[RMDB]
RNA sequence: GGGAACGACUCGAGUAGAGUCGAAAAUGCUGGCUUGUACCUGGUCAGGUGCCCACAUAACCCAGGCUGGCAGAGAAGUCUGGGAAACUCCAGCCAGCCAGCCAGAGCACCAGCUUCAAAUGAAGCACUACAACUGGUGUUUCGACACCAGUUGUAGAAAAGAAACAACAACAACAAC
Reactivity to 2A3 in 0.01 (KOAc 150mM, MgCl2 10mM, bicine 150mM(pH8.5), 24C), signal-to-noise 2, nucleotides 027 to 126: u090g010c020u030g020g000c030u060u150g000u100a100c010c030u070g000g190u110c070a070g010g020u030g000c000c080c000a050c030a060u140a080a080c030c000c000a010g020g000c000u020g010g000c060a020g030a030g020a300a020g050u000c000u060g040g000g000a030a040a010c040u010c000c000a000g000c020c000a000g000c020c000a000g000c010c020a010g020a020g050c030a030c090c000a030g000c040u000u020c050a250a300a300u300g020a020a000g000c030a030
Reactivity to DMS in 0.01 (KOAc 150mM, MgCl2 10mM, bicine 150mM(pH8.5), 24C), signal-to-noise 2, nucleotides 027 to 126: u010g020c040u000g030g000c100u010u000g010u000a030c200c030u010g020g020u000c140a110g000g020u010g020c030c030c030a120c130a070u000a120a100c030c000c030a080g010g000c000u000g010g030c010a140g030a130g000a170a080g000u000c010u000g000g000g000a030a060a130c090u020c010c000a130g000c000c020a150g010c030c020a020g000c020c010a070g000a130g010c080a060c050c000a100g040c010u000u000c020a120a090a150u040g000a010a000g010c010a300